This 177-nucleotide RNA was probed chemically with DMS and 2A3.
RNA sequence: GGGAACGACUCGAGUAGAGUCGAAAAGCUGAGUAUACGAGGUUAGUUCAUUCUCGUAUGCAUGAUUGGACAAAUUAAAAUCUCAAUUUGGAUCUGGGCCUCCCUCCAGCGACGGCCGAACAUACAACAACAGAUUUGGAUUCGUCCAAAUCUGUUGAAAAGAAACAACAACAACAAC
Reactivity to DMS in 0.01 (KOAc 150mM, MgCl2 10mM, bicine 150mM(pH8.5), 24C), signal-to-noise 4, nucleotides 027 to 126: g010c020u000g020a210g020u000a000u000a010c010g010a020g010g020u000u010a080g000u000u020c230a120u010u010c000u010c000g020u000a000u000g000c010a090u000g000a060u000u000g020g000a100c020a030a030a040u000u010a060a060a090a100u010c160u010c090a030a040u000u000u010g000g000a100u000c050u000g020g000g000c010c010u000c020c010c020u000c090c030a040g010c020g000a110c140g010g000c020c020g000a030a040c080a050u000a130c220a040a090
Reactivity to 2A3 in 0.01 (KOAc 150mM, MgCl2 10mM, bicine 150mM(pH8.5), 24C), signal-to-noise 3, nucleotides 027 to 126: g040c020u040g020a000g040u030a000u000a000c010g000a010g040g020u140u160a040g090u220u240c060a060u220u000c000u000c000g000u010a010u020g000c020a050u100g020a070u040u160g040g040a000c020a020a040a010u070u090a080a160a160a240u080c100u010c100a030a060u060u000u040g110g030a110u020c060u100g040g030g000c000c000u020c030c010c010u020c030c000a010g000c000g040a040c060g010g000c010c010g020a020a000c020a020u170a030c040a050a000
Reactivities are given for positions 27 through 126.
Conditions: 150 mM KOAc, 10 mM MgCl2 and 150 mM bicine (pH 8.5), 24 C.
Source: RMDB library M2PK90, as collected in RNAgym.
For DMS the reverse transcriptase was MarathonRT.